The record gives the reactivity of an RNA of 177 nucleotides to 2A3 and DMS. The DMS profile rests on 9,333 reads. Values cover nucleotides 27 to 126. The 2A3 profile rests on 11,405 reads. It was measured as part of the RMDB library M2PK50.
RNA sequence: GGGAACGACUCGAGUAGAGUCGAAAACUACAUAGUUUCGACUAUGUAGAAACCAUUAGGAAGGAUGCAGAUGCAUAUGGACGAGGGCAACUAACCUAUUGCGAACAGCAGGUUUCGACCUGCUGAAUGACUUACUUUCAUUCGUGAAAGUAAGUCAAAAAGAAACAACAACAACAAC
Reactivity to 2A3 in 0.01 (KOAc 150mM, MgCl2 10mM, bicine 150mM(pH8.5), 24C), signal-to-noise 6, nucleotides 027 to 126: c000u000a010c000a000u000a000g010u020u040u090c180g060a020c010u000a000u000g000u000a000g000a010a000a000c010c000a050u040u130a050g090g030a070a020g050g030a020u040g010c030a020g040a190u110g040c040a070u070a120u280g060g040a040c070g020a060g000g050g000c010a030a020c020u050a020a030c010c010u040a090u060u170g090c070g070a100a030c000a000g010c000a000g010g030u000u050u090c130g070a030c000c000u000g000c000u000g010a000a010
Reactivity to DMS in 0.01 (KOAc 150mM, MgCl2 10mM, bicine 150mM(pH8.5), 24C), signal-to-noise 7, nucleotides 027 to 126: c010u000a000c010a000u000a000g010u000u000u020c170g020a040c000u000a000u000g000u000a010g010a080a100a180c040c010a070u000u010a070g010g000a120a140g000g000a070u010g020c040a080g010a100u010g010c060a050u010a070u010g010g020a100c080g020a110g000g000g010c030a030a050c060u000a060a160c050c040u000a080u000u010g010c080g010a090a180c000a000g010c000a000g000g000u000u000u010c200g010a020c000c000u000g010c000u000g010a030a060